Chemical mapping of a 177-nucleotide RNA with 2A3 and DMS. DMS adducts were read by reverse transcription with MarathonRT. In probing experiments dimethyl sulfate is read out at A N1 and C N3, which are open when not base-paired. The RNA was probed in 150 mM KOAc, 10 mM MgCl2 and 150 mM bicine (pH 8.5) at 24 C. The DMS profile rests on 1,091 reads. Source: RMDB library OK2TRN, as collected in RNAgym.

[RMDB]
RNA sequence: GGGAACGACUCGAGUAGAGUCGAAAACGAAUGUUCUUGCAGCGGCUCAAGGACAAGCUCGGCAACCACGCAAACGCCUCGAGCGAGGUCGAAUACGACGGUGCCGUCGCGUGGCUGGUGGGCGAGGCUAGGCCCAACUGUUCGCAGUUGGGCCUAGAAAAGAAACAACAACAACAAC
Reactivity to 2A3 in 0.01 (KOAc 150mM, MgCl2 10mM, bicine 150mM(pH8.5), 24C), signal-to-noise 2, nucleotides 027 to 126: c040g020a130a130u180g000u000u030c010u000u050g050c010a060g150c030g100g000c050u010c040a010a020g030g020a000c030a050a020g010c000u010c000g120g000c000a020a050c010c000a010c010g010c030a110a170a080c020g010c000c000u070c100g120a210g170c060g000a020g050g020u140c050g070a000a080u130a110c090g030a010c010g090g070u180g150c110c000g000u030c020g000c030g010u000g030g030c000u080g050g300u010g010g030g000c010g010a020g020g080
Reactivity to DMS in 0.01 (KOAc 150mM, MgCl2 10mM, bicine 150mM(pH8.5), 24C), signal-to-noise 1, nucleotides 027 to 126: c080g000a190a120u000g000u000u000c030u000u050g000c140a170g000c130g000g040c060u000c020a020a000g030g000a000c000a120a070g000c030u000c020g030g000c050a030a070c020c000a040c070g010c060a040a130a190c300g000c030c000u000c030g000a110g000c070g000a030g000g000u000c000g010a080a100u020a050c040g010a010c000g010g050u030g020c060c030g010u000c100g000c000g020u010g020g020c050u000g000g020u000g020g010g020c010g000a050g000g010